[RMDB]
RNA sequence: GGGAACGACUCGAGUAGAGUCGAAAAACUGCCUGUUUCGACAGGCAGUAGUCUACUUCGCCCAACCGCCGAGUCGUUCCCGCGGUUGCGUGAAGUAGUUUGAUAUGAUCUUAUUCGUAAGAUCAAAACUGGACUGGAAAUUCGUUUCCAGUCCAGUAAAAGAAACAACAACAACAAC
Reactivity to DMS in 0.01 (KOAc 150mM, MgCl2 10mM, bicine 150mM(pH8.5), 24C), signal-to-noise 1, nucleotides 027 to 126: a010c000u000g000c000c010u000g000u000u000u020c170g020a080c020a000g000g010c000a000g010u000a030g040u000c000u000a010c000u000u000c010g010c000c030c000a020a010c010c000g030c000c300g020a160g000u000c000g020u000u000c000c000c010g020c000g010g000u000u000g010c300g010u000g010a000a020g000u000a000g010u000u010u020g010a120u000a080u010g000a010u000c000u000u000a030u000u030c180g020u010a010a000g010a020u000c000a050a050a100
An RNA of 177 nucleotides, treated with DMS and read out base by base. Conditions: 150 mM KOAc, 10 mM MgCl2 and 150 mM bicine (pH 8.5), 24 C.